[RMDB]
The record gives the reactivity of an RNA of 177 nucleotides to 2A3 and DMS.
RNA sequence: GGGAACGACUCGAGUAGAGUCGAAAAUCUGCCAAGCUCACUUUUAAUCAUGAGAAAGAAAUUACCCACAUGGAGACAGCAGAAAAUGAGAAAGGAGAGAUCGUGCUGCGAAUAAUUCCAGCGAGUGGACUUCAAUAUAGUUCGCUAUAUUGAAGUCAAAAGAAACAACAACAACAAC
Reactivity to 2A3 in 0.01 (KOAc 150mM, MgCl2 10mM, bicine 150mM(pH8.5), 24C), signal-to-noise 3, nucleotides 027 to 126: u010c010u050g020c020c010a080a030g050c020u020c030a090c020u090u170u140u190a150a130u180c020a060u070g070a040g070a090a100a010g040a020a150a020u120u090a120c000c020c020a030c020a070u050g000g020a010g010a020c020a020g000c010a000g040a040a080a000a030u150g040a040g030a050a060a010g040g000a030g010a000g000a020u070c020g040u060g000c030u020g000c020g030a030a030u180a160a020u170u040c010c000a010g010c000g030a040g040u090g110
Reactivity to DMS in 0.01 (KOAc 150mM, MgCl2 10mM, bicine 150mM(pH8.5), 24C), signal-to-noise 4, nucleotides 027 to 126: u010c040u010g010c040c040a080a180g000c020u000c020a060c070u000u020u000u010a080a210u020c100a080u020g000a110g010a100a070a080g000a060a080a080u000u000a170c060c040c010a070c150a110u010g000g000a050g010a090c080a060g000c040a030g000a040a050a080a050u020g010a080g010a050a080a040g000g000a060g010a080g000a040u000c110g020u010g040c030u000g030c100g000a050a200u000a070a120u000u000c010c000a010g020c050g010a070g030u010g010
Description: High 2A3 reactivity points to a flexible backbone, as in loops and unpaired stretches. The 2A3 profile rests on 2,749 reads.